RNA sequence: GGGAACGACUCGAGUAGAGUCGAAAAUGCUGAGAGUGCCCGAAAACUAUGACUCCCCACCUACAGCGGUUGGGGUAGACGAUGAUCUCGACAAUGCACCACAUCAUCCUUCUUCAGAUCUAGGUCUCAUCCUGGGUCACUUCACGAUUGAUAACGAAUUUUGAAGAAACUUCGGUUUCUUCAAAAUAAAAGAAACAACAACAACAAC
Reactivity to DMS in 0.01 (KOAc 150mM, MgCl2 10mM, bicine 150mM(pH8.5), 24C), signal-to-noise 1, nucleotides 027 to 156: u000g030c060u000g020a110g020a090g020u010g010c010c030c000g000a040a030a080a120c090u000a140u000g040a110c030u000c010c010c000c020a080c030c010u000a190c160a190g050c140g020g030u000u000g030g000g000g030u000a010g040a080c090g000a070u010g000a090u000c030u010c040g000a030c070a110a100u000g030c110a100c030c040a120c090a000u010c020a070u000c020c050u000u020c010u000u010c050a130g000a060u010c010u010a040g050g000u010c210u000c170a100u000c030c000u010g000g000g010u010c030a040c070u000u000c040a060c050g020a130u000u010g010a170u000a080a150c090g010a130
Reactivity to 2A3 in 0.01 (KOAc 150mM, MgCl2 10mM, bicine 150mM(pH8.5), 24C), signal-to-noise 3, nucleotides 027 to 156: u090g000c080u070g040a040g000a000g080u020g030c000c010c030g030a060a080a040a010c100u120a130u190g040a070c020u020c010c030c010c010a010c010c010u160a160c050a080g110c080g030g000u100u120g000g000g010g010u030a010g000a000c010g040a040u100g020a030u050c010u000c070g010a000c060a020a060u150g030c010a020c010c010a070c000a000u100c000a000u020c020c000u050u160c000u090u130c080a050g000a040u000c010u020a000g000g040u030c060u050c190a120u290c010c010u030g000g000g000u020c010a020c010u140u190c060a070c090g110a110u090u210g070a060u150a170a030c050g020a060

Chemical mapping of a 207-nucleotide RNA with DMS and 2A3. For DMS, 2,099 sequencing reads were counted. In probing experiments dimethyl sulfate is read out at A N1 and C N3, which are open when not base-paired.